[RMDB]
RNA sequence: GGGAACGACUCGAGUAGAGUCGAAAACAAUUUAGAAGGCCUUCGAUACCCACCAAAAAACUUAAACAGGGACAAGCUUAAAUCUUACAUUCAUUUCAAUGGGAGGGGUGGUUGAGCUAGUAUGACCUAUAAUAAAUCCAUUCGUGGAUUUAUUAUAAAAAGAAACAACAACAACAAC
Reactivity to 2A3 in 0.01 (KOAc 150mM, MgCl2 10mM, bicine 150mM(pH8.5), 24C), signal-to-noise 2, nucleotides 027 to 126: c000a060a080u120u260u270a130g020a180a060g070g010c010c000u020u040c000g000a000u100a130c050c000c000a020c000c030a010a080a100a070a030a000c140u210u180a070a130a070c070a040g050g000g030a020c020a060a020g000c000u050u100a050a080a050u040c000u030u010a040c040a080u020u150c020a040u030u170u150c050a070a040u070g030g020g010a070g060g040g010g000u000g000g020u030u030g000a030g000c000u020a020g020u050a080u160g020a030c010c010
Reactivity to DMS in 0.01 (KOAc 150mM, MgCl2 10mM, bicine 150mM(pH8.5), 24C), signal-to-noise 5, nucleotides 027 to 126: c050a100a080u010u010u000a090g020a160a140g010g000c030c010u000u000c070g020a120u010a100c020c000c020a090c110c120a010a080a080a090a080a050c110u000u000a040a060a100c120a060g000g010g010a050c060a050a050g010c070u000u010a030a060a050u000c060u000u000a060c080a060u010u010c060a050u000u010u020c130a040a080u000g010g000g010a070g010g000g000g020u000g000g020u000u010g000a040g010c040u000a060g020u000a030u000g000a090c060c030
Conditions: 150 mM KOAc, 10 mM MgCl2 and 150 mM bicine (pH 8.5), 24 C. Structure probing data (2A3 and DMS) for a 177-nucleotide construct. DMS adducts were read by reverse transcription with MarathonRT. Source: RMDB library OK2TST, as collected in RNAgym. The 2A3 profile rests on 1,705 reads. For 2A3 the reverse transcriptase was SuperScript II with manganese.